[RMDB]
This 207-nucleotide RNA was probed chemically with 2A3. Values cover nucleotides 27 to 156.

RNA sequence: GGGAACGACUCGAGUAGAGUCGAAAAGAAAGAAAGAAGCGAGCUGGCGCAGGCGCACGGGCAACCGUCAAUCCAGCACUUCACAAGUCUUGUCGUUCUGACAGGACAUCCAUCAACCCACCGGGAAAAAAGGACUACAGCUUCGGCUGUAGUCCAAGAUUCAUAUACCCUUCGGGGUAUAUGAAUCAAAAGAAACAACAACAACAAC
Reactivity to 2A3 in 0.01 (KOAc 150mM, MgCl2 10mM, bicine 150mM(pH8.5), 24C), signal-to-noise 1, nucleotides 027 to 156: g010a000a040a020g030a060a040a010g010a030a000g010c080g110a020g010c040u030g010g000c070g000c160a050g050g060c040g020c040a010c020g000g050g000c020a050a060c040c000g000u000c010a000a020u100c000c000a020g040c020a020c020u080u070c030a020c060a250a000g000u000c000u030u010g010u010c020g070u200u220c130u300g040a010c000a000g000g030a010c000a010u010c020c010a070u020c040a050a120c010c000c050a060c070c100g040g000g000a030a140a010a000a060a030g000g000a020c000u000a000c000a010g020c000u030u130c200g170g000c000u000g000u000a000g020u010c000c000a000a010
It was measured as part of the RMDB library M2RFPK.
The 2A3 profile rests on 633 reads.
The reactions ran in a buffer of 150 mM KOAc, 10 mM MgCl2 and 150 mM bicine (pH 8.5), at 24 C.
For 2A3 the reverse transcriptase was SuperScript II with manganese.